[RMDB]
Notes: This 177-nucleotide RNA was probed chemically with DMS. The reactions ran in a buffer of 150 mM KOAc, 10 mM MgCl2 and 150 mM bicine (pH 8.5), at 24 C.

RNA sequence: GGGAACGACUCGAGUAGAGUCGAAAAGGGUUUGGAUUACAUCAAUAGUAACAUGAGCAGAACUAAACAGAACAAGAAGUACUGCGGUUAUUCAAGUUCAAAGUUCACACUAUCGCAAUAAAGGGAAUCUCGAAAAUGAGUUCGCUCAUUUUCGAGAAAAAGAAACAACAACAACAAC
Reactivity to DMS in 0.01 (KOAc 150mM, MgCl2 10mM, bicine 150mM(pH8.5), 24C), signal-to-noise 1, nucleotides 027 to 126: g010g000g010u000u000u000g020g000a110u000u000a070c070a140u000c100a080a090u000a040g010u000a040a110c160a150u010g000a060g050c030a070g000a050a040c000u000a070a000a120c140a120g010a080a050c040a030a300g000a060a030g040u000a040c060u000g030c120g020g010u000u000a170u000u000c080a040a300g000u000u000c010a030a080a070g000u000u000c000a130c100a090c020u000a020u030c060g050c040a020a060u030a000a000a080g000g000g000a040a130